[RMDB]
RNA sequence: GGGAACGACUCGAGUAGAGUCGAAAACGCGAGGAGGUGGAGAUACCAUGCCGACCCGAAGAAGGAAAGGAGGACACGGACGACAAACCGUAGGUACUCUUGCCCUUUAUUGUUGGGUGCACCCUGGAGACCGUUCGGUUCGCCGAACGGAAAAGAAACAACAACAACAAC
Reactivity to DMS in 0.01 (KOAc 150mM, MgCl2 10mM, bicine 150mM(pH8.5), 24C), signal-to-noise 5, nucleotides 027 to 129: c140g000c020g000a040g030g010a030g050g020u020g010g010a070g020a100u050a100c020c040a060u040g040c000c040g020a090c030c040c040g030a040a080g020a060a050g020g020a010a080a040g000g000a000g000g030a160c010a060c020g050g040a110c030g040a090c250a050a100a010c030c030g030u030a000g000g000u050a120c020u010c000u000u070g020c170c000c000u030u030u060a110u050u110g030u030u030g000g000g060u000g030c090a000c080c050c040u000g060g000a000g000a010
Reactivity to 2A3 in 0.01 (KOAc 150mM, MgCl2 10mM, bicine 150mM(pH8.5), 24C), signal-to-noise 5, nucleotides 027 to 129: c050g000c050g000a040g040g000a020g000g030u050g030g050a120g000a010u140a100c030c050a030u060g020c020c010g040a030c010c010c000g010a030a030g020a020a010g030g000a040a000a000g010g000a000g010g010a000c020a010c020g010g030a030c030g010a010c130a020a070a020c010c010g020u030a070g020g020u140a060c020u000c000u050u050g010c010c000c000u060u090u040a160u040u120g140u030u060g010g030g000u030g000c020a070c020c000c010u020g040g010a030g000a030